[RMDB]
RNA sequence: GGGAACGACUCGAGUAGAGUCGAAAAGAUAUGGAAUGUAUACGUCUUUUGACGGAGGGUAGUCGGAAACGACUAACCUCCGAUAAGACGUACAUUCCUAAGUCAAACCACAACUUCGGUUGUGGAAUCCCUACUAAUGCUUCGGCAUUAGUAGGGAAAAAGAAACAACAACAACAAC
Reactivity to 2A3 in 0.01 (KOAc 150mM, MgCl2 10mM, bicine 150mM(pH8.5), 24C), signal-to-noise 3, nucleotides 027 to 126: g030a010u030a040u070g000g010a020a000u020g040u080a240u010a230c030g000u000c040u020u210u220u270g300a210c020g000g000a010g000g000g000u000a010g000u020c010g000g000a060a070a040c020g000a000c000u000a010a010c000c000u000c000c000g000a000u000a000a000g000a000c000g000u000a000c000a000u000u000c000c000u000a090a020g010u000c080a090a090a100c000c000a000c020a010a000c000u100u100c300g230g000u010u020g000u010g000g010a030a050
Reactivity to DMS in 0.01 (KOAc 150mM, MgCl2 10mM, bicine 150mM(pH8.5), 24C), signal-to-noise 2, nucleotides 027 to 126: g000a020u020a300u010g010g010a000a010u000g020u000a140u000a070c010g010u000c000u000u000u000u010g030a190c190g000g000a030g010g000g010u000a000g030u010c000g000g000a100a070a260c000g010a020c000u000a000a010c000c000u000c010c000g000a020u000a010a010g000a020c000g010u000a020c010a000u000u010c000c000u000a010a060g010u000c050a180a100a270c000c000a010c020a010a000c000u000u000c200g020g020u000u000g000u040g000g010a090a080
This 177-nucleotide RNA was probed chemically with 2A3 and DMS. Reactivities are rounded to 0.1 and cut off at 0 and 3. For 2A3 the reverse transcriptase was SuperScript II with manganese. Source: RMDB library TTRDES, as collected in RNAgym. Conditions: 150 mM KOAc, 10 mM MgCl2 and 150 mM bicine (pH 8.5), 24 C. Values cover nucleotides 27 to 126.